[RMDB]
Description: Chemical mapping of a 177-nucleotide RNA with 2A3. Values cover nucleotides 27 to 126. The reactions ran in a buffer of 150 mM KOAc, 10 mM MgCl2 and 150 mM bicine (pH 8.5), at 24 C. For 2A3, 813 sequencing reads were counted. Source: RMDB library OK1LIB, as collected in RNAgym.
RNA sequence: GGGAACGACUCGAGUAGAGUCGAAAAUCCGGCCAUAUGCGGUCAGCCUUGUUUGUUUUCGUUGACGGGUGGAGGCGGAGGAGGCGUCGAAGGCCUGCCGGUUUGCCGGGUCUGAUCAAGCUUGGCAGCGACUAAUCACCUUCGGGUGAUUAGUCGCAAAAGAAACAACAACAACAAC
Reactivity to 2A3 in 0.01 (KOAc 150mM, MgCl2 10mM, bicine 150mM(pH8.5), 24C), signal-to-noise 2, nucleotides 027 to 126: u050c000c000g010g000c000c020a190u150a130u300g070c060g000g000u020c000a010g000c000c030u110u100g050u100u180u110g120u010u070u090u110c140g020u090u090g150a090c100g030g000g010u170g010g040a020g010g020c040g030g060a050g040g000a010g000g000c040g020u130c050g030a090a000g060g020c000c000u020g010c000c000g060g000u100u050u080g000c000c000g050g000g010u030c000u030g050a060u100c060a140a100g020c000u070u010g010g000c050a070